[RMDB]
RNA sequence: GGGAACGACUCGAGUAGAGUCGAAAAGAUAUGGACCGUCACGAAGAGUGAUGACCUACAUCGGAAACGAUGUAGCAAGCUCUGUGCGGUCCUAAGUCAAAACGCAUGCGGCUUCGGCCGCAUGCGAGCUACUACAAUAGUUCGCUAUUGUAGUAGCAAAAGAAACAACAACAACAAC
Reactivity to 2A3 in 0.01 (KOAc 150mM, MgCl2 10mM, bicine 150mM(pH8.5), 24C), signal-to-noise 5, nucleotides 027 to 126: g030a010u050a040u090g010g010a010c020c000g170u300c100a020c160g300a300a250g010a020g060u080g170a300u110g010a020c010c000u000a000c000a000u000c000g000g000a020a060a030c020g000a000u010g000u010a000g000c000a160a150g010c000u020c050u090g080u110g020c000g000g020u000c000c000u010a020a000g010u000c020a030a050a100a090c020g010c010a010u010g010c000g000g080c030u150u200c300g180g020c180c000g000c010a000u000g000c000g000a020
Reactivity to DMS in 0.01 (KOAc 150mM, MgCl2 10mM, bicine 150mM(pH8.5), 24C), signal-to-noise 3, nucleotides 027 to 126: g010a010u000a300u000g000g000a020c000c010g010u020c020a040c110g040a180a100g010a030g060u000g000a100u020g000a160c300c010u000a000c000a000u000c000g000g000a080a070a110c000g010a020u000g000u000a000g000c050a030a100g010c020u000c010u000g000u000g020c010g030g020u000c000c000u000a000a050g000u000c030a070a060a130a220c020g000c000a010u000g010c000g020g010c010u000u030c300g050g010c000c000g010c010a020u000g020c010g000a030

Record summary
The record gives the reactivity of an RNA of 177 nucleotides to 2A3 and DMS. The RNA was probed in 150 mM KOAc, 10 mM MgCl2 and 150 mM bicine (pH 8.5) at 24 C. For 2A3 the reverse transcriptase was SuperScript II with manganese. The DMS profile rests on 4,226 reads. The 2A3 profile rests on 11,651 reads.